[RMDB]
RNA sequence: GGGAACGACUCGAGUAGAGUCGAAAACAUAAACAACUUCCGCAUCCUCCCAAGCUAACACUUAGAGCGCCUUGUAGAUAGAAUUGUGUUCGUAUUUGUGUAUAAUAACUGCAAGGGACGUCAAUGCGUUCAUCCAUGUGUUCGCACAUGGAUGAACAAAAGAAACAACAACAACAAC
Reactivity to DMS in 0.01 (KOAc 150mM, MgCl2 10mM, bicine 150mM(pH8.5), 24C), signal-to-noise 1, nucleotides 027 to 126: c080a100u020a080a040a170c100a040a090c100u010u000c020c000g040c040a060u000c070c060u000c000c040c030a050a200g020c040u000a120a020c100a070c070u010u000a100g010a090g000c030g000c010c030u030u000g010u000a010g000a100u020a050g000a050a030u000u010g000u000g010u000u010c140g030u000a110u000u000u000g030u000g030u010a070u000a040a100u010a030a130c030u010g030c030a000a050g020g010g010a060c090g000u030c130a040a060u000g000c060
Reactivity to 2A3 in 0.01 (KOAc 150mM, MgCl2 10mM, bicine 150mM(pH8.5), 24C), signal-to-noise 1, nucleotides 027 to 126: c040a040u230a080a150a010c040a000a090c040u070u030c060c000g040c020a060u090c010c050u000c000c000c000a000a040g030c010u050a040a070c040a010c050u040u060a030g010a000g060c010g020c010c000u040u020g040u040a000g020a130u020a090g070a100a150u110u110g040u070g000u080u000c020g000u090a120u010u120u150g020u010g070u020a020u020a160a150u050a020a050c000u000g000c030a000a010g000g000g060a010c010g010u030c050a040a060u060g030c030